[RMDB]
Chemical mapping of a 177-nucleotide RNA with 2A3 and DMS.
For DMS, 6,013 sequencing reads were counted.
Conditions: 150 mM KOAc, 10 mM MgCl2 and 150 mM bicine (pH 8.5), 24 C.

RNA sequence: GGGAACGACUCGAGUAGAGUCGAAAAGAUAUGGAGUCCCUCCUGGGAGAAGCAUGUCGGAAACGACAUGACUUCGACGAUCAGGACAUGGGACUCCUAAGUCAAAACGGCGUGUUCGCACGCCGAAUCUCAGAGUUAAGUUCGCUUAACUCUGAGAAAAAGAAACAACAACAACAAC
Reactivity to 2A3 in 0.01 (KOAc 150mM, MgCl2 10mM, bicine 150mM(pH8.5), 24C), signal-to-noise 3, nucleotides 027 to 126: g020a000u080a060u150g010g000a000g010u000c020c000c000u020c000c000u020g020g000g000a060g020a010a000g030c000a010u010g020u000c010g030g030a070a040a030c020g020a010c000a020u030g100a170c030u010u000c010g070a130c010g000a020u040c010a000g020g030a020c110a260u250g010g000g010a010c000u000c000c000u010a000a000g010u000c030a010a000a090a110c030g000g020c020g000u000g050u090u110c300g020c180a010c010g000c000c000g000a000a040
Reactivity to DMS in 0.01 (KOAc 150mM, MgCl2 10mM, bicine 150mM(pH8.5), 24C), signal-to-noise 5, nucleotides 027 to 126: g010a060u000a300u010g010g000a030g020u000c010c000c000u000c000c000u010g020g000g010a060g020a020a020g000c000a000u000g000u000c000g020g010a120a100a280c000g000a010c000a010u000g000a090c000u000u000c010g000a090c240g010a060u000c000a010g000g010a090c300a070u020g010g030g000a020c010u000c000c010u000a000a070g010u010c050a090a070a130a280c020g010g010c000g040u000g000u000u020c200g030c000a010c030g010c000c000g000a020a040
Notes
For 2A3, 11,404 sequencing reads were counted.